Annotation
An RNA of 207 nucleotides, treated with 2A3 and read out base by base. Source: RMDB library OK3TST, as collected in RNAgym.
RNA sequence: GGGAACGACUCGAGUAGAGUCGAAAACAUACUAGUUUUCUAGUAUGAGGAUCCUUUUGGAUCCGAACGACGGCAUGUCUCUACCAGCUUUUUUUGCUCCGUCGGGCUCAUCUGCUUUUGGACUUUUGUCCUUGCAGAUGUGUCAAGGUAGGACAGAGAUAGCCUAGUAGUUCGCUACUAGGCUAUCAAAAGAAACAACAACAACAAC
Reactivity to 2A3 in 0.01 (KOAc 150mM, MgCl2 10mM, bicine 150mM(pH8.5), 24C), signal-to-noise 4, nucleotides 027 to 156: c000a000u000a000c000u000a020g120u120u140u210u300c000u010a000g000u010a010u010g010a050g000g000a010u010c020c000u110u110u160u300g000g000a020u000c010c000g010a090a000c020g000a000c000g000g000c110a080u120g010u000c040u000c000u140a000c000c020a010g040c060u120u160u040u090u080u300u300g010c030u030c000c000g000u000c000g000g000g020c010u010c000a000u000c000u000g000c010u140u150u150u130g000g000a000c020u150u190u150u300g000u000c000c000u000u000g000c000a000g000a000u000g020u000g000u010c020a020a010g000g000u000a000g000g000a000c000a000g100a000